[RMDB]
RNA sequence: GGGAACGACUCGAGUAGAGUCGAAAAAGAGGUGGUACGCCACCUCAAAGACCAAUCUUCUGCUAAGCUGAAGAUAAGCCCUUACGGACAGGCGGGUCGGUUGCCGGACGUCCACUACGGUGGACGAGGUUAAAACUGUGUUCGCACAGUUUUAACCAAAAGAAACAACAACAACAAC
Reactivity to 2A3 in 0.01 (KOAc 150mM, MgCl2 10mM, bicine 150mM(pH8.5), 24C), signal-to-noise 9, nucleotides 027 to 126: a000g010a000g010g000u020g000g010u030a050c290g060c020c000a000c000c000u010c000a020a020a000g000a010c010c000a010a010u000c010u000u000c010u030g030c020u140a240a160g020c010u030g020a000a010g010a020u050a090a040g020c020c000c000u060u160a030c020g010g020a010c010a020g030g000c010g000g000g000u010c000g010g020u070u280g030c010c000g020g020a040c000g000u000c000c010a000c000u010a020c150g100g000u000g000g000a010c010g010a050
Reactivity to DMS in 0.01 (KOAc 150mM, MgCl2 10mM, bicine 150mM(pH8.5), 24C), signal-to-noise 4, nucleotides 027 to 126: a090g000a010g000g030u000g000g020u010a090c250g040c020c010a020c000c010u000c000a010a070a050g010a070c010c000a300a060u000c000u000u000c000u000g000c020u040a120a170g020c020u000g000a010a010g000a010u010a110a170g010c030c000c020u020u020a100c080g010g000a020c070a090g000g000c010g000g020g000u000c000g000g000u030u030g000c000c000g000g010a170c020g010u000c000c000a010c000u010a130c190g050g000u000g010g010a010c010g000a030
Description: Structure probing data (2A3 and DMS) for a 177-nucleotide construct. The RNA was probed in 150 mM KOAc, 10 mM MgCl2 and 150 mM bicine (pH 8.5) at 24 C. For 2A3 the reverse transcriptase was SuperScript II with manganese. High DMS reactivity at an A or C suggests that its Watson-Crick edge is free.